Chemical mapping of a 177-nucleotide RNA with DMS. The RNA was probed in 150 mM KOAc, 10 mM MgCl2 and 150 mM bicine (pH 8.5) at 24 C.

RNA sequence: GGGAACGACUCGAGUAGAGUCGAAAAACAACCUUGCGAUACGGGCUUUCGAUGAAGCCAUAUUUGUUGACGCGGGCAAAGGUUGCAAGCGAGUUGAUCAGACCGAUAUUCGGGCCUUCCGGCGUUAUCCGCAUUUAAUCUUCGGAUUAAAUGCGGAAAAAGAAACAACAACAACAAC
Reactivity to DMS in 0.01 (KOAc 150mM, MgCl2 10mM, bicine 150mM(pH8.5), 24C), signal-to-noise 2, nucleotides 027 to 126: a030c010a040a290c300c000u000u000g000c010g000a020u020a030c140g000g000g010c000u000u000u000c250g000a140u000g000a020a010g010c000c000a040u000a050u000u000u000g010u000u010g010a070c160g030c120g000g000g000c040a020a030a080g030g020u000u000g010c010a050a020g010c080g000a300g000u000u010g000a210u000c050a080g000a030c020c020g010a180u000a030u000u000c020g000g000g000c020c030u000u000c000c000g050g040c020g000u000u000a060